RNA sequence: GGGAACGACUCGAGUAGAGUCGAAAAGACCGUCAGUUAGACGGAAGAAGUGCAUAAAUCCACAACGGAAGACCAGAUAAUGCACAAAUGUGGAUAAGCGUACGGAUCUACGUGCGCUAAACGUGAGAGUCCUAUAAAUGUUCGCAUUUAUAGGACUAAAAGAAACAACAACAACAAC
Reactivity to 2A3 in 0.01 (KOAc 150mM, MgCl2 10mM, bicine 150mM(pH8.5), 24C), signal-to-noise 5, nucleotides 027 to 126: g100a040c000c000g000u010c000a120g040u100u300a080g000a000c040g080g030a020a030g090a060a010g000u050g000c050a090u050a160a140a050u070c020c000a030c020a150a040c090g080g020a100a070g020a070c010c000a010g040a090u140a160a040u100g030c020a020c010a050a040a010u120g000u040g050g020a040u020a110a030g000c010g000u010a000c000g030g020a050u080c050u210a090c060g000u000g000c000g000c010u010a000a070a000c030g000u060g040a100g020
Reactivity to DMS in 0.01 (KOAc 150mM, MgCl2 10mM, bicine 150mM(pH8.5), 24C), signal-to-noise 9, nucleotides 027 to 126: g000a100c000c010g000u000c020a170g010u030u040a100g000a010c000g010g010a090a060g010a120a070g010u000g000c030a030u020a060a080a040u000c000c010a110c170a110a160c210g000g010a090a050g010a300c040c030a100g000a130u020a090a060u000g000c000a010c020a050a070a080u030g000u020g000g000a100u010a080a040g000c000g020u010a010c000g000g000a160u070c240u050a100c010g010u000g000c000g000c000u000a000a040a050c180g000u010g020a120g020